[RMDB]
RNA sequence: GGGAACGACUCGAGUAGAGUCGAAAAACGAUUUGCACUGGUGCAGUUCCGAACAGCACUGGCGCCUCCCUCGAAUGAAUCUUAUAAGGGGCGCGACGCAGUACGCGCUGUGUUGGGGCUUAGAAUCGAUGCAUGCAUACUUCGGUAUGCAUGCAUCAAAAGAAACAACAACAACAAC
Reactivity to 2A3 in 0.01 (KOAc 150mM, MgCl2 10mM, bicine 150mM(pH8.5), 24C), signal-to-noise 4, nucleotides 027 to 126: a000c050g040a050u070u100u110g020c060a040c040u070g000g090u120g000c000a020g010u050u070c040c050g040a110a030c000a010g020c020a010c050u010g040g000c000g000c000c010u090c000c000c010u050c030g060a050a060u140g030a060a140u080c120u190u190a150u110a210a110g000g000g030g000c060g010c010g010a020c020g000c040a010g020u060a060c150g030c030g000c070u010g010u020g030u030u070g000g010g030g020c010u060u170a060g050a050a050u080c050
Reactivity to DMS in 0.01 (KOAc 150mM, MgCl2 10mM, bicine 150mM(pH8.5), 24C), signal-to-noise 1, nucleotides 027 to 126: a150c120g030a070u030u000u030g010c000a060c010u010g000g000u000g000c000a060g030u000u030c120c060g020a020a020c000a070g000c000a010c050u020g000g000c030g000c000c120u000c000c060c000u040c130g010a140a080u000g000a060a070u080c060u060u010a090u010a030a080g020g020g000g000c130g020c050g000a040c060g020c100a100g010u010a100c070g020c080g000c000u020g040u010g030u000u020g000g000g000g000c010u000u000a040g030a180a080u030c170